[RMDB]
RNA sequence: GGGAACGACUCGAGUAGAGUCGAAAACAGGGAGGCGCAGGGCUACAGCGUCCGGCGCGCCUGCUUGCACGUCUCCCGUGACGCCGAGGACAUUGCUCUCGCCAUGGUCCGCGACUUGGCAAUAGUGGCGAUGAAUCUCUUUCGAGAGAUUCAUCGCAAAAGAAACAACAACAACAAC
Reactivity to 2A3 in 0.01 (KOAc 150mM, MgCl2 10mM, bicine 150mM(pH8.5), 24C), signal-to-noise 2, nucleotides 027 to 126: c010a020g000g080g000a020g000g000c000g000c010a020g040g000g020c010u190a110c120a090g040c060g070u030c020c000g190g010c090g030c000g020c020c000u000g030c000u010u040g000c020a020c100g000u020c020u040c000c000c010g040u060g070a070c130g010c070c000g010a080g030g040a040c010a130u060u140g000c010u040c000u020c090g000c010c040a110u110g080g040u060c000c000g010c030g090a070c030u020u020g030g000c000a040a050u050a140g120u140g070
Reactivity to DMS in 0.01 (KOAc 150mM, MgCl2 10mM, bicine 150mM(pH8.5), 24C), signal-to-noise 2, nucleotides 027 to 126: c080a130g000g000g030a000g000g010c030g030c020a250g020g000g000c000u010a080c240a210g030c180g000u000c050c040g030g010c230g040c040g010c030c010u000g030c030u000u020g020c100a170c160g000u000c020u000c000c000c010g000u020g000a150c090g010c040c010g000a110g000g010a030c080a090u000u040g000c060u020c040u000c050g040c040c040a070u040g000g010u000c010c000g000c030g000a100c100u000u000g000g050c030a190a040u040a090g020u030g010